[RMDB]
RNA sequence: GGGAACGACUCGAGUAGAGUCGAAAAUGAGAAGUCGUCAGUAGUUCGACGUGAGCAGAAGCCCGCCUCGAUAUGCUAUGUGGACGAGGGCAUGCCCAACACACACCUUAACCCUAGCGGGACGCAACAAAAAUUACCCAUUCGUGGGUAAUUUUUGAAAAGAAACAACAACAACAAC
Reactivity to 2A3 in 0.01 (KOAc 150mM, MgCl2 10mM, bicine 150mM(pH8.5), 24C), signal-to-noise 2, nucleotides 027 to 126: u170g020a030g010a190a050g110u030c000g000u010c020a040g060u070a010g030u080u070c000g030a010c000g030u020g020a010g000c040a050g040a300a030g070c000c000c000g010c000c000u010c010g030a030u010a080u300g040c060u040a010u120g300u050g250g030a050c010g030a080g050g040g000c020a030u110g000c000c030c000a040a000c040a000c000a000c010a010c010c010u000u090a060a060c000c000c030u020a010g020c030g020g010g040a020c040g020c030a020a100
Reactivity to DMS in 0.01 (KOAc 150mM, MgCl2 10mM, bicine 150mM(pH8.5), 24C), signal-to-noise 3, nucleotides 027 to 126: u010g020a150g020a120a120g010u000c010g040u000c000a060g010u000a060g000u010u010c060g000a040c150g010u000g010a070g000c040a120g020a150a150g020c040c020c020g000c020c040u010c050g010a060u020a080u020g000c000u000a060u020g000u000g000g000a030c050g010a110g000g000g000c060a030u010g000c020c010c050a100a110c100a070c080a050c060a040c070c040u000u000a070a100c010c010c020u010a110g000c100g000g010g000a050c120g010c090a040a140
This 177-nucleotide RNA was probed chemically with 2A3 and DMS. Source: RMDB library M2PK90, as collected in RNAgym. Conditions: 150 mM KOAc, 10 mM MgCl2 and 150 mM bicine (pH 8.5), 24 C. For DMS, 2,013 sequencing reads were counted. As a SHAPE reagent, 2A3 marks flexible, mostly unpaired nucleotides at the ribose 2'-OH.